[RMDB]
RNA sequence: GGGAACGACUCGAGUAGAGUCGAAAACUAAAUCUAAUGGGAAGUUGUGCGCGUUACGUUCGUGCAUUACUUCCAUACCUAAAUCAGCACGGUUAAUGAUAUCAGCCCAUGUGUUGAUAACACGACCCGGUUAUGCAUUCUUCGGAAUGCAUAACCGAAAAGAAACAACAACAACAAC
Reactivity to 2A3 in 0.01 (KOAc 150mM, MgCl2 10mM, bicine 150mM(pH8.5), 24C), signal-to-noise 1, nucleotides 027 to 126: c000u020a040a010a050u250c120u220a110a110u210g070g000g000a010a020g000u000u010g020u020g020c000g000c040g010u050u140a120c170g060u060u180c020g020u010g040c000a000u000u000a000c020u000u000c000c020a000u000a000c000c020u090a080a130a140u070c040a010g000c010a000c060g030g020u040u040a120a060u180g060a050u010a030u060c020a010g090c010c030c080a200u230g010u010g020u030u000g000a040u020a030a000c040a010c020g060a030c040c020
Reactivity to DMS in 0.01 (KOAc 150mM, MgCl2 10mM, bicine 150mM(pH8.5), 24C), signal-to-noise 1, nucleotides 027 to 126: c100u000a020a090a030u000c150u020a140a100u000g000g010g000a090a000g030u000u000g020u000g000c000g020c010g000u000u000a100c260g030u000u010c020g120u020g050c010a010u000u000a000c020u000u000c000c000a060u000a100c050c150u000a040a180a120u010c180a120g030c120a060c130g090g000u000u000a110a040u030g000a050u000a050u000c070a020g000c050c020c300a100u000g010u020g050u000u000g000a020u000a030a090c000a040c090g050a180c020c050
Background:
This 177-nucleotide RNA was probed chemically with 2A3 and DMS. It was measured as part of the RMDB library OK2TST. For 2A3, 976 sequencing reads were counted. The reactions ran in a buffer of 150 mM KOAc, 10 mM MgCl2 and 150 mM bicine (pH 8.5), at 24 C. For 2A3 the reverse transcriptase was SuperScript II with manganese. DMS (dimethyl sulfate) methylates the pairing face of unpaired adenines and cytosines.